[RMDB]
RNA sequence: GGGAACGACUCGAGUAGAGUCGAAAAGUCCCGUUCGCGGGACGAAGAAACUAAUAUACCCAUAUUCUGGCUAGGUGAUCAUCAGAAUAUGGGUAUAUUAGUUUGGGUACGCAUUCUUCGGAAUGCGGUUCCUAACUGUGUUCGCACAGUUAGGAACAAAAGAAACAACAACAACAAC
Reactivity to 2A3 in 0.01 (KOAc 150mM, MgCl2 10mM, bicine 150mM(pH8.5), 24C), signal-to-noise 1, nucleotides 027 to 126: g000u020c020c010c010g030u030u040c250g000c000g010g000g000a030c060g020a080a030g060a000a030a000c000u000a020a000u010a000u010a000c000c000c000a010u000a000u000u000c000u000g120g030c130u090a100g120g230u160g250a130u160c050a000u020c000a000g000a000a000u000a000u000g000g010g000u000a010u000a000u000u000a000g000u000u000u000g000g000g010u060a000c000g000c000a000u010u010c020u040u040c120g070g010a010a010u010g000c010g030
Reactivity to DMS in 0.01 (KOAc 150mM, MgCl2 10mM, bicine 150mM(pH8.5), 24C), signal-to-noise 3, nucleotides 027 to 126: g000u000c000c000c000g030u000u000c160g050c010g010g000g000a030c000g030a100a110g000a050a010a010c000u000a000a010u000a000u010a010c000c000c000a000u000a000u000u000c010u000g000g010c300u000a100g030g010u010g010a110u010c100a140u000c000a000g000a020a000u000a000u000g020g020g010u000a000u000a000u000u000a000g000u000u000u000g010g010g000u000a300c020g000c000a010u000u000c000u010u010c220g020g000a010a000u000g000c010g010
Source information
Chemical mapping of a 177-nucleotide RNA with 2A3 and DMS. The DMS profile rests on 4,012 reads. The 2A3 profile rests on 2,042 reads. It was measured as part of the RMDB library RFMREP. For DMS the reverse transcriptase was MarathonRT. Values cover nucleotides 27 to 126. 2A3 adducts were read by reverse transcription with SuperScript II with manganese. 2A3 is a SHAPE reagent: it acylates the 2'-hydroxyl of flexible nucleotides of all four kinds.